[RMDB]
RNA sequence: GGGAACGACUCGAGUAGAGUCGAAAAAAAUCACACGCAACAUUUAUCGAUGAAGUUCACCAUCUCAUGUAGGCACAAUUUGUGGUGCUGCAAAACAAUUACUGUAGUAACGUAAAAGAUCACUGAUCACAAAUCAGUGUAGCAGAUAUAAUAAGAAGACUACUCGAUAUUUCGAUAUCGAGUAGUCAAAAGAAACAACAACAACAAC
Reactivity to 2A3 in 0.01 (KOAc 150mM, MgCl2 10mM, bicine 150mM(pH8.5), 24C), signal-to-noise 5, nucleotides 027 to 156: a000a000a010u180c030a050c010a010c060g100c020a050a050c020a140u140u200u180a220u160c060g040a040u050g050a090a030g050u060u080c040a060c100c000a100u040c040u030c050a090u080g040u100a100g040g030c010a020c020a080a140u040u060u150g110u060g040g000u010g000c000u000g000c010a000a040a050a090c070a000a100u130u060a040c020u040g050u120a050g040u030a120a030c050g020u030a060a030a020a010g050a030u060c000a000c030u010g000a000u030c050a000c050a240a160a010u000c000a000g000u010g010u020a010g030c030a000g030a060u050a010u040a180a100u100a090a040g090a110a030
Reactivity to DMS in 0.01 (KOAc 150mM, MgCl2 10mM, bicine 150mM(pH8.5), 24C), signal-to-noise 2, nucleotides 027 to 156: a060a020a070u000c010a110c110a110c120g030c020a080a050c040a070u020u000u000a100u000c040g010a060u000g000a100a060g000u020u000c050a090c030c000a090u000c070u020c080a110u000g030u000a090g030g000c050a030c050a030a110u000u020u000g070u000g030g000u000g000c010u000g040c070a070a040a070a080c040a070a100u000u000a070c060u010g000u000a120g010u000a030a060c080g040u020a040a070a100a120g020a190u000c000a030c010u010g020a030u000c020a090c300a040a070a060u000c020a040g030u000g040u000a080g030c030a050g020a180u000a030u000a030a080u000a030a090g000a090a200